[RMDB]
RNA sequence: GGGAACGACUCGAGUAGAGUCGAAAAUGACGGUACACUCAUGGUAGAGCGGUUUGUGUCUUUGGCUAUAGAUGCUUACCCUCUCACAAAGCAUGAAGAUAUAGAAUACCAGAAUGUAUUCUGGGUCUCAUACGCUAAUGUUCGCAUUAGCGUAUGAAAAAGAAACAACAACAACAAC
Reactivity to 2A3 in 0.01 (KOAc 150mM, MgCl2 10mM, bicine 150mM(pH8.5), 24C), signal-to-noise 5, nucleotides 027 to 126: u100g030a010c050g070g030u110a040c040a020c040u030c010a060u060g110g030u160a010g010a010g010c120g010g010u000u020u030g010u010g010u020c000u070u060u080g100g000c020u040a020u050a250g010a020u010g000c000u000u020a020c000c000c000u000c000u020c010a040c020a040a140a020g070c010a010u040g050a080a050g070a030u090a010u050a160g110a080a040u070a220c010c010a020g070a060a050u180g040u160a150u060u010c010u000g020g000g070u000c020
Reactivity to DMS in 0.01 (KOAc 150mM, MgCl2 10mM, bicine 150mM(pH8.5), 24C), signal-to-noise 7, nucleotides 027 to 126: u010g010a100c090g010g010u010a080c130a120c060u000c020a050u000g010g010u010a010g000a020g010c290g040g010u000u000u000g020u000g010u000c010u000u010u000g020g020c200u000a090u010a020g010a020u000g000c010u000u000a030c010c000c010u000c020u000c090a060c140a090a090a130g010c020a020u000g000a050a090g010a120u010a080u010a050g000a070a070u000a080c000c130a090g000a070a080u000g000u000a080u000u000c000u000g000g000g000u000c070
Conditions: 150 mM KOAc, 10 mM MgCl2 and 150 mM bicine (pH 8.5), 24 C. Structure probing data (2A3 and DMS) for a 177-nucleotide construct. For DMS the reverse transcriptase was MarathonRT. Reactivities are given for positions 27 through 126. For 2A3 the reverse transcriptase was SuperScript II with manganese.